Structure probing data (2A3 and DMS) for a 177-nucleotide construct. Source: RMDB libraries RFM100 and RFMREP, as collected in RNAgym.
RNA sequence: GGGAACGACUCGAGUAGAGUCGAAAAUGGAACUGCGAACGGCUCAGUAGAACGGUGAUUAUUUAAUCGUGUAGGAAGGAUAACCGCGGGAAACUGUGGCUAAUAACACGAGUAAGACGCCGACCCACGUCCCCUUAAUUUUCGAAUUAAGGGGACGAAAAGAAACAACAACAACAAC
Reactivity to 2A3 in 0.01 (KOAc 150mM, MgCl2 10mM, bicine 150mM(pH8.5), 24C), signal-to-noise 4, nucleotides 027 to 126: u100g020g020a010a030c020u050g020c060g050a170a030c070g100g000c040u020c040a040g010u050a030g040a100a020c010g000g030u010g060a150u030u100a060u050u110u070a100a050u010c010g010u020g000u040a040g090g140a120a090g080g030a030u080a090a040c010c000g000c000g000g000g010a030a010a010c000u010g010u020g020g000c010u030a050a030u080a110a000c010a010c010g000a000g030u030a030a000g030a020c010g000c010c010g010a040c010c000c000a040
Reactivity to DMS in 0.01 (KOAc 150mM, MgCl2 10mM, bicine 150mM(pH8.5), 24C), signal-to-noise 4, nucleotides 027 to 126: u020g010g020a090a080c040u010g020c040g010a120a150c110g000g000c070u010c040a040g030u030a080g000a110a170c010g000g010u020g000a180u020u010a090u040u000u000a030a060u000c010g000u000g000u000a040g000g010a120a070g010g010a170u010a080a220c020c000g010c020g040g000g010a090a060a120c010u000g010u010g010g000c020u010a060a150u060a040a010c030a000c000g020a020g000u000a040a050g010a070c050g010c000c000g020a170c010c000c010a230

The reactions ran in a buffer of 150 mM KOAc, 10 mM MgCl2 and 150 mM bicine (pH 8.5), at 24 C.